[RMDB]
RNA sequence: GGGAACGACUCGAGUAGAGUCGAAAAGGAUGAACAGCCUAAUAGAUAACUGUGGCUUAAGGAUCCCACAUUAUGUGUUGACUGACCUCCGAACCUUGGUGCAGAAGUCACGACCGAAGAUCGAUGGUCUCCUACAGGAAUUCGUUCCUGUAGGAGAAAAAGAAACAACAACAACAAC
Reactivity to DMS in 0.01 (KOAc 150mM, MgCl2 10mM, bicine 150mM(pH8.5), 24C), signal-to-noise 6, nucleotides 027 to 126: g000g000a050u010g010a090a140c050a020g010c010c010u010a020a040u000a050g010a030u000a020a020c230u000g010u000g010g010c210u010u000a100a120g020g010a110u000c260c010c010a040c060a060u010u000a010u010g010u000g020u000u000g010a020c020u000g000a090c050c060u000c020c010g010a080a140c030c020u000u010g000g030u000g010c040a080g000a070a100g010u000c040a060c090g000a060c030c040g000a090a070g010a100u000c080g010a110u010g010g000
Reactivity to 2A3 in 0.01 (KOAc 150mM, MgCl2 10mM, bicine 150mM(pH8.5), 24C), signal-to-noise 4, nucleotides 027 to 126: g020g000a030u080g020a200a060c020a020g000c030c020u110a110a080u070a060g180a060u070a120a050c100u060g030u000g030g020c010u100u110a100a050g090g030a070u080c010c050c010a010c000a000u060u070a060u110g210u020g000u020u070g010a030c000u010g000a050c000c030u010c010c020g020a050a050c020c020u010u130g060g020u040g010c050a040g010a250a000g070u120c000a010c060g020a020c010c000g030a050a020g050a100u100c060g030a030u090g050g040

Chemical mapping of a 177-nucleotide RNA with DMS and 2A3.
DMS adducts were read by reverse transcription with MarathonRT.
For DMS, 6,138 sequencing reads were counted.